[RMDB]
RNA sequence: GGGAACGACUCGAGUAGAGUCGAAAAGCCGACUGCACGUGCGUGCGAGCAGUUUUCGAAAUCGCACGUUUCACGUAUAGACCCAACUCUACUCGAUGCGAGGGUCAGCAAGCAAGCAGCAAUAAAACUAAUUCUUGGUAUUCGUACCAAGAAUUAGAAAAGAAACAACAACAACAAC
Reactivity to DMS in 0.01 (KOAc 150mM, MgCl2 10mM, bicine 150mM(pH8.5), 24C), signal-to-noise 8, nucleotides 027 to 126: g010c060c050g020a160c060u000g000c090a020c020g020u000g010c010g010u000g010c000g010a020g010c170a150g010u010u000u010u010c140g010a070a130a110u000c000g000c000a010c000g000u000u000u010c030a020c020g030u000a070u000a080g000a080c030c030c020a130a060c000u010c000u000a010c010u000c000g010a020u010g010c030g000a110g000g010g010u000c020a090g000c050a060a060g000c060a060a060g010c040a040g010c060a070a060u010a040a070a080a150
Reactivity to 2A3 in 0.01 (KOAc 150mM, MgCl2 10mM, bicine 150mM(pH8.5), 24C), signal-to-noise 5, nucleotides 027 to 126: g050c020c010g050a080c040u040g010c030a010c020g010u010g010c000g000u010g000c010g010a060g070c100a050g020u050u060u160u300c070g090a090a090a100u010c000g020c010a000c000g000u030u070u070c020a010c000g010u000a030u030a080g030a040c010c020c000a020a030c000u000c000u020a020c000u010c000g030a030u080g000c020g020a050g000g020g010u010c010a010g020c010a030a020g030c010a030a030g000c010a020g000c020a030a060u130a160a090a020a010

This 177-nucleotide RNA was probed chemically with DMS and 2A3. The data come from the RNA Mapping Database (RMDB), library M2PK90.